[RMDB]
RNA sequence: GGGAACGACUCGAGUAGAGUCGAAAAGACUAGCCAUUUCGAAAGAGAUUGUGGAAGCGCACAAUGGUCGUAUUUGGGCAAACAGUGUAGAAGGUCAAGGUACAUCUAUCUUUAUCACACUUCCAUGAGUACCCGCACUUUUCGAAGUGCGGGUACUAAAAGAAACAACAACAACAAC
Reactivity to 2A3 in 0.01 (KOAc 150mM, MgCl2 10mM, bicine 150mM(pH8.5), 24C), signal-to-noise 2, nucleotides 027 to 126: g060a020c070u060a010g020c010c020a050u140u000u000c070g030a070a000a000g180a000g020a040u070u020g000u010g040g050a050a050g160c010g050c050a000c000a000a020u180g080g040u020c060g000u000a010u050u040u180g040g000g000c060a090a040a000c060a040g000u010g070u250a080g020a300a010g020g000u000c000a000a070g030g040u010a090c030a110u040c030u030a020u060c000u060u010u000a130u110c050a000c000a010c040u070u000c000c050a110u060g010
Reactivity to DMS in 0.01 (KOAc 150mM, MgCl2 10mM, bicine 150mM(pH8.5), 24C), signal-to-noise 1, nucleotides 027 to 126: g000a120c170u000a150g000c020c030a000u120u000u050c000g000a050a040a100g000a020g000a000u000u000g040u020g000g000a130a050g010c260g110c060a070c000a080a000u020g000g000u100c020g010u000a050u000u000u040g000g000g000c040a000a020a110c100a020g030u000g010u000a010g000a040a110g030g000u000c220a220a040g000g040u000a020c180a080u010c160u020a090u000c000u000u000u000a040u000c070a090c110a230c130u000u000c000c000a000u000g000

Source: RMDB library OK1LIB, as collected in RNAgym. This 177-nucleotide RNA was probed chemically with 2A3 and DMS. For 2A3, 662 sequencing reads were counted. The RNA was probed in 150 mM KOAc, 10 mM MgCl2 and 150 mM bicine (pH 8.5) at 24 C. For DMS the reverse transcriptase was MarathonRT.